[RMDB]
RNA sequence: GGGAACGACUCGAGUAGAGUCGAAAAGAUAUGGACUGGUGGAGCUUCAAUAUCGGAAACGAUAUUAAGCCUUGAAGCCAUGUCCUAAGUCAAAACCUUGCCAUUCAGUUCGCUGAAUGGCAAGGAACGUAUGAUUUAGGUUCGCCUAAAUCAUACGAAAAGAAACAACAACAACAAC
Reactivity to 2A3 in 0.01 (KOAc 150mM, MgCl2 10mM, bicine 150mM(pH8.5), 24C), signal-to-noise 5, nucleotides 027 to 126: g000a000u020a010u050g000g000a000c010u010g010g000u020g000g020a040g010c010u000u030c160a010a010u000a000u000c000g010g000a000a010a000c000g000a000u000a000u010u010a000a000g000c000c010u130u020g000a010a000g000c000c020a050u300g000u000c000c000u000a020a000g010u000c010a010a030a090a200c000c000u000u000g000c000c000a000u000u000c000a000g060u040u170c300g060c150u000g000a010a000u000g000g000c000a000a000g000g000a000a000
Reactivity to DMS in 0.01 (KOAc 150mM, MgCl2 10mM, bicine 150mM(pH8.5), 24C), signal-to-noise 8, nucleotides 027 to 126: g010a020u000a060u010g010g010a020c000u000g010g000u000g000g000a020g030c000u000u000c180a010a010u000a000u000c000g010g010a020a010a030c000g010a000u000a000u000u000a010a000g050c010c300u000u010g000a100a140g000c000c000a010u010g010u000c000c000u000a000a070g000u000c010a100a080a070a110c000c000u000u000g010c000c000a010u000u000c000a010g000u000u010c260g000c010u000g000a010a010u000g010g010c000a000a000g000g000a000a010
Chemical mapping of a 177-nucleotide RNA with 2A3 and DMS. For DMS, 15,240 sequencing reads were counted. The reactions ran in a buffer of 150 mM KOAc, 10 mM MgCl2 and 150 mM bicine (pH 8.5), at 24 C. It was measured as part of the RMDB library TTRDEL.